The data come from the RNA Mapping Database (RMDB), library OK1LIB. An RNA of 177 nucleotides, treated with DMS and 2A3 and read out base by base.

[RMDB]
RNA sequence: GGGAACGACUCGAGUAGAGUCGAAAACAAACAAAGCAAAAUUGUCCAUUGCGGUCUACCGUCAGAAUUUCGGGCGGAUCUACGAAAUUAUACAGAAAGCCGGCCGCAAUGUCGUAUAGAAAGGAAAAUUACUCGUCGUGUUCGCACGACGAGUAAUAAAAGAAACAACAACAACAAC
Reactivity to DMS in 0.01 (KOAc 150mM, MgCl2 10mM, bicine 150mM(pH8.5), 24C), signal-to-noise 1, nucleotides 027 to 126: c060a000a240a300c100a020a030a060g000c070a070a050a130a130u100u060g030u030c060c030a000u020u000g000c000g050g040u000c020u000a250c020c070g000u010c080a250g000a150a150u000u000u000c010g000g000g000c080g000g000a140u070c000u050a060c060g000a000a000a000u010u030a050u000a300c200a280g000a000a140a010g000c230c130g100g000c070c000g000c000a000a000u060g000u060c140g000u000a050u000a000g000a000a170a000g020g000a000a050a010
Reactivity to 2A3 in 0.01 (KOAc 150mM, MgCl2 10mM, bicine 150mM(pH8.5), 24C), signal-to-noise 1, nucleotides 027 to 126: c000a000a220a000c000a000a060a010g150c010a220a060a110a110u010u000g010u000c030c040a000u000u000g070c000g000g000u000c020u020a050c000c050g050u000c080a050g090a030a300u110u080u160c000g150g000g000c000g070g000a000u030c090u010a110c000g040a030a030a030u110u050a060u040a050c050a050g260a250a030a000g000c010c010g090g000c000c010g050c000a000a050u000g000u000c000g000u040a080u000a090g130a000a020a120g060g100a000a070a150
For 2A3 the reverse transcriptase was SuperScript II with manganese. Conditions: 150 mM KOAc, 10 mM MgCl2 and 150 mM bicine (pH 8.5), 24 C.